[RMDB]
RNA sequence: GGGAACGACUCGAGUAGAGUCGAAAAGCCGCUUCGGCUGGGGCCUGGCGCACGCGGCGGCCGCCGUGGCCAUGAGCCGCCGAUACGACCGCGCGCAGAAGGGCUUCCUGCUGACCAGCCUGCGCCGGUCCACAUGCGGUUUCGACCGCAUGUGGACAAAAGAAACAACAACAACAAC
Reactivity to 2A3 in 0.01 (KOAc 150mM, MgCl2 10mM, bicine 150mM(pH8.5), 24C), signal-to-noise 1, nucleotides 027 to 126: g040c010c020g000c100u040u060c030g030g000c030u040g020g000g030g020c000c020u010g040g060c020g000c020a050c050g020c020g000g000c000g000g060c020c030g040c100c060g000u030g000g030c040c000a190u240g050a030g050c000c020g010c010c010g020a040u090a240c030g100a170c000c010g000c000g020c020g000c010a030g170a190a060g000g000g010c000u080u140c010c030u020g010c020u040g060a060c050c020a050g040c000c020u040g000c020g060c010c020g090
Reactivity to DMS in 0.01 (KOAc 150mM, MgCl2 10mM, bicine 150mM(pH8.5), 24C), signal-to-noise 2, nucleotides 027 to 126: g010c010c060g020c140u000u010c070g000g010c010u000g010g030g000g000c020c030u010g000g000c180g010c050a110c060g010c020g000g000c040g020g000c130c030g030c130c080g030u000g010g010c010c000a110u010g040a180g010c030c000g010c020c020g000a030u050a070c060g000a080c030c000g020c130g030c040g030c010a060g010a290a100g000g000g000c010u000u020c030c020u000g010c020u000g000a150c200c070a070g000c040c020u010g010c060g020c020c030g020

This 177-nucleotide RNA was probed chemically with 2A3 and DMS.
The DMS profile rests on 1,557 reads.
It was measured as part of the RMDB library OK2TRN.
The 2A3 profile rests on 1,730 reads.